[RMDB]
RNA sequence: GGGAACGACUCGAGUAGAGUCGAAAAGACUGUCCUGGAACUCACUCUGUAGAACAGACUGGCCUCAAACUCAGAAAUCUGCUUGCCUCUGUCUCCCAAGUGCUGAGAUUAAAGGUAUGUGCCACUAUACUAAAUGCCGUUUCGACGGCAUUUAGUAAAAAGAAACAACAACAACAAC
Reactivity to 2A3 in 0.01 (KOAc 150mM, MgCl2 10mM, bicine 150mM(pH8.5), 24C), signal-to-noise 1, nucleotides 027 to 126: g030a020c030u050g040u060c020c010u060g070g000a070a040c030u010c070a010c030u050c070u070g040u160a040g060a160a000c040a020g000a090c010u000g040g000c000c000u020c030a030a070a040c010u050c030a010g090a040a180a110u050c030u090g060c020u070u120g010c040c020u080c020u020g000u000c070u000c020c000c000a060a010g040u070g000c060u010g010a030g000a120u180u170a110a070a050g060g020u060a060u140g020u000g070c000c040a060c060u090a070
Reactivity to DMS in 0.01 (KOAc 150mM, MgCl2 10mM, bicine 150mM(pH8.5), 24C), signal-to-noise 3, nucleotides 027 to 126: g010a110c060u000g010u000c040c000u000g000g010a090a060c030u000c070a040c040u010c040u000g030u010a060g000a080a170c030a110g010a080c070u020g010g020c040c040u000c050a050a090a100c060u000c060a100g010a060a150a090u000c030u000g020c050u000u000g010c040c010u000c030u000g010u000c060u010c030c020c020a080a090g000u000g030c060u010g020a070g000a120u010u010a040a110a070g010g010u000a050u010g000u000g000c040c020a020c140u000a130